[RMDB]
RNA sequence: GGGAACGACUCGAGUAGAGUCGAAAACCCAACGUUCGCGUUGGGGUAAAGGGGUCGUAGUGGGACAUGCGACGAUACUGAAGCCUCCACGGUAUCUAUCGCAACAGCCGUAACAUCUACGACGGAGGCACCCGUUCGCCCGUCGUUCGCGACGGAAACUUAAGAGCAUGUUCGCAUGCUCUUAAGUAAAAGAAACAACAACAACAAC
Reactivity to 2A3 in 0.01 (KOAc 150mM, MgCl2 10mM, bicine 150mM(pH8.5), 24C), signal-to-noise 5, nucleotides 027 to 156: c000c000c000a010a020c040g080u130u120c210g000c000g090u010u020g050g010g020g010u030a100a110a050g300g050g060g020u000c010g010u000a010g020u040g020g030g100a060c150a300u300g000c000g000a010c000g000a010u000a000c000u010g030a080a020g010c000c000u000c000c010a010c000g000g000u010a000u010c000u020a060u030c020g000c040a150a150c050a210g180c090c080g020u010a030a020c020a060u150c020u020a000c000g020a000c020g000g000a000g000g000c000a000c000c010c010g100u070u070c040g020c000c000c000g000u010c010g010u060u120c260g000c000g090a000c000g010g000a060a050
Reactivity to DMS in 0.01 (KOAc 150mM, MgCl2 10mM, bicine 150mM(pH8.5), 24C), signal-to-noise 2, nucleotides 027 to 156: c000c000c010a030a010c040g050u010u010c200g030c090g070u010u030g000g020g000g040u000a010a120a100g000g020g000g010u000c030g010u000a060g000u010g000g020g030a100c050a220u010g010c000g030a040c110g020a060u000a030c020u000g020a090a120g030c020c000u000c010c030a300c030g000g020u010a020u000c030u000a140u010c000g000c030a120a130c110a180g050c070c070g000u000a130a150c060a080u000c030u000a030c020g000a040c020g000g030a050g080g030c030a010c010c000c050g020u000u000c040g030c070c000c000g000u000c000g000u010u000c220g030c020g000a030c020g000g030a020a040

Annotation
The record gives the reactivity of an RNA of 207 nucleotides to 2A3 and DMS. For 2A3 the reverse transcriptase was SuperScript II with manganese. Conditions: 150 mM KOAc, 10 mM MgCl2 and 150 mM bicine (pH 8.5), 24 C. High 2A3 reactivity points to a flexible backbone, as in loops and unpaired stretches. The data come from the RNA Mapping Database (RMDB), library RNAMAK. For DMS, 4,530 sequencing reads were counted. For 2A3, 6,406 sequencing reads were counted. Reactivities are given for positions 27 through 156. For DMS the reverse transcriptase was MarathonRT.